[RMDB]
RNA sequence: GGGAACGACUCGAGUAGAGUCGAAAACGGUAUUGGUCAAGGCUAUACCUACAGCGCACCUUCAAAAGGGCGCUUAAUCCCCGGCCAAGCGCCGAAAUAUGAAUAGACACCGCUGGGCUGGUAGGGCAAAACAUGGCGAUCUUCGGAUCGCCAUGAAUCAUACCACCUAGUUCGCUAGGUGGUAUGAAAAAGAAACAACAACAACAAC
Reactivity to DMS in 0.01 (KOAc 150mM, MgCl2 10mM, bicine 150mM(pH8.5), 24C), signal-to-noise 2, nucleotides 027 to 156: c080g010g000u000a060u010u000g080g070u000c140a110a170g030g000c040u000a110u000a050c050c000u000a080c220a080g030c040g020c000a120c000c010u000u030c130a120a090a130a100g030g000g020c000g030c020u000u020a040a070u000c010c000c030c040g000g030c050c020a070a110g000c050g020c000c030g010a010a080a040u010a220u000g020a220a160u000a130g000a090c030a080c060c040g010c000u000g030g030g030c050u010g030g020u000a040g020g020g030c070a060a060a040a240c000a030u000g000g020c000g000a000u010c010u000u000c210g080g010a010u000c000g030c000c000a000u000g000a020a120
Reactivity to 2A3 in 0.01 (KOAc 150mM, MgCl2 10mM, bicine 150mM(pH8.5), 24C), signal-to-noise 2, nucleotides 027 to 156: c040g000g010u020a040u060u130g040g010u080c080a100a120g100g030c000u000a010u010a060c000c030u000a030c020a040g020c000g000c060a300c050c020u070u100c050a100a110a040a000g020g000g000c000g000c000u000u000a000a000u000c000c000c000c000g040g000c010c030a070a020g020c070g040c070c030g050a050a030a000u230a080u110g130a100a040u060a090g040a020c020a000c060c040g000c010u020g010g020g000c000u000g040g090u040a060g040g000g000c030a000a010a020a080c030a010u020g000g000c020g000a000u000c010u020u060c160g080g000a000u000c000g000c010c010a010u000g000a000a000

Record summary
Chemical mapping of a 207-nucleotide RNA with DMS and 2A3. DMS adducts were read by reverse transcription with MarathonRT. For 2A3, 1,038 sequencing reads were counted. The reactions ran in a buffer of 150 mM KOAc, 10 mM MgCl2 and 150 mM bicine (pH 8.5), at 24 C. For 2A3 the reverse transcriptase was SuperScript II with manganese.